[RMDB]
RNA sequence: GGGAACGACUCGAGUAGAGUCGAAAAGAUAUGGAGGUGAUGCUGUUUGUGAACAGUCGAUAAGCUCCAUUCGGAAACGAAUGAAGAGCUUUUGACGACUGUUCACAAACAGCGCACCUCCUAAGUCCGCUUCUAAAAAGUUCGCUUUUUAGAAGCGAAAAGAAACAACAACAACAAC
Reactivity to DMS in 0.01 (KOAc 150mM, MgCl2 10mM, bicine 150mM(pH8.5), 24C), signal-to-noise 1, nucleotides 027 to 126: g020a090u000a300u010g020g000a020g030g000u000g000a050u000g120c010u020g000u000u000u000g000u010g030a040a010c000a020g030u020c000g070a130u010a070a020g020c010u000c000c000a010u000u000c000g050g010a190a160a270c020g000a000a010u000g040a250a160g010a050g010c000u000u010u000u020g020a270c160g030a060c000u000g000u010u010c000a000c020a000a000a000c030a060g000c030g010c000a000c010c000u000c010c010u000a010a070g000u010c050